[RMDB]
RNA sequence: GGGAACGACUCGAGUAGAGUCGAAAAGAUAUGGACAGCCCACGGCGCACGGAUCCCUCGGAAACGAGAACUCCGUGAACUACGCUCAACGGCUGUCCUAAGUCGAAAAGUAGCCUUCGGGCUACAACCAAGCAUGUAGGUUCGCCUACAUGCUUGGAAAAGAAACAACAACAACAAC
Reactivity to DMS in 0.01 (KOAc 150mM, MgCl2 10mM, bicine 150mM(pH8.5), 24C), signal-to-noise 3, nucleotides 027 to 126: g000a030u000a300u000g010g000a030c010a040g010c000c000c060a140c300g000g000c030g000c000a040c010g020g000a020u000c020c060c000u010c000g000g000a220a090a150c000g030a020g030a140a030c060u000c000c000g020u000g010a030a000c130u010a300c010g000c000u000c040a100a300c300g000g000c010u000g010u000c000c010u010a010a100g010u020c010g000a060a120a090a110g030u000a000g000c000c000u000u030c160g070g010g000c000u000a020c000a070a190

The record gives the reactivity of an RNA of 177 nucleotides to DMS. For DMS, 1,491 sequencing reads were counted. It was measured as part of the RMDB library TTRDEL. For DMS the reverse transcriptase was MarathonRT.